This 177-nucleotide RNA was probed chemically with DMS. In probing experiments dimethyl sulfate is read out at A N1 and C N3, which are open when not base-paired.
RNA sequence: GGGAACGACUCGAGUAGAGUCGAAAAGAUAUGGAGCUAAGGAGUAGAAGUAUGUACCGACAUGCUUACUAUCGGAAACGAUAGAAGCAACAGCGGUCACAUACUUCUACUCCUUAGCUCCUAAGUCCUCUCAGGGAGUGUUCGCACUCCCUGAGAGAAAAGAAACAACAACAACAAC
Reactivity to DMS in 0.01 (KOAc 150mM, MgCl2 10mM, bicine 150mM(pH8.5), 24C), signal-to-noise 1, nucleotides 027 to 126: g010a130u010a300u020g000g020a000g010c000u000a010a010g010g020a050g030u000a000g030a020a000g010u010a000u000g040u010a010c030c000g000a060c090a300u010g020c000u000u010a150c000u000a010u010c000g000g020a160a170a210c020g030a020u000a000g010a070a010g000c000a000a060c300a250g000c080g020g000u000c240a000c000a000u000a000c000u000u010c000u000a000c000u000c000c020u020u010a000g000c000u000c000c000u000a020a080g030u000c020
The RNA was probed in 150 mM KOAc, 10 mM MgCl2 and 150 mM bicine (pH 8.5) at 24 C.